RNA sequence: GGGAACGACUCGAGUAGAGUCGAAAAUUGUUAAGCAAUAGUUCAAAGAUAGUCACCAACUCCCUUCAUUUUGAGUUCUAGGCUCUGCUUGUUUUGCUGGCUCAUUCACAAAUGAAGUACUCUUUUACACGUACUAGGGGUUCGCCCCUAGUACGUGAAAAGAAACAACAACAACAAC
Reactivity to DMS in 0.01 (KOAc 150mM, MgCl2 10mM, bicine 150mM(pH8.5), 24C), signal-to-noise 1, nucleotides 027 to 126: u000u000g020u010u000a100a110g020c010a040a060u010a060g000u000u000c110a030a090a090g000a060u000a100g010u000c050a150c060c070a100a030c100u000c070c060c030u000u000c050a080u000u000u000u010g010a060g010u000u000c170u010a100g040g020c030u000c080u010g030c040u000u000g010u000u000u000u000g030c050u000g000g000c060u000c060a070u010u020c150a050c200a050a060a030u000g000a070a040g050u000a140c140u000c030u000u000u020u000a040